[RMDB]
RNA sequence: GGGAACGACUCGAGUAGAGUCGAAAAUCCACUGUUGCUAACGACUCCGCGAGGAGGGCGAGUACACUGUGGAGACCGCUGGCGCUAAGUCAGAGGAAGGAUUGGUCGACGGUAGGUCAGUAUGCCCCCUGCACCUAAUGUUCGCAUUAGGUGCAGGAAAAGAAACAACAACAACAAC
Reactivity to 2A3 in 0.01 (KOAc 150mM, MgCl2 10mM, bicine 150mM(pH8.5), 24C), signal-to-noise 1, nucleotides 027 to 126: u000c000c000a000c000u010g040u080u100g040c000u000a020a030c000g000a010c000u000c000c030g010c050g040a060g040g010a000g000g050g000c000g010a000g020u020a030c060a020c070u080g000u000g010g050a010g010a000c000c040g000c020u000g040g010c000g030c060u120a090a060g090u040c040a030g020a050g200g030a100a080g090g070a060u070u110g040g010u130c020g010a010c020g100g050u180a150g100g020u040c020a050g040u060a090u240g080c030c000c010
Reactivity to DMS in 0.01 (KOAc 150mM, MgCl2 10mM, bicine 150mM(pH8.5), 24C), signal-to-noise 1, nucleotides 027 to 126: u000c000c000a000c000u000g010u000u000g000c010u000a060a030c000g010a110c020u000c010c050g000c300g010a140g000g020a060g000g000g020c020g010a060g000u000a010c170a020c020u000g020u020g010g000a030g000a100c020c000g040c040u000g010g000c010g080c100u020a060a160g000u020c020a040g010a110g000g010a060a100g010g000a150u000u020g000g000u000c000g020a070c030g000g020u000a020g060g000u000c010a100g000u000a060u000g040c000c030c070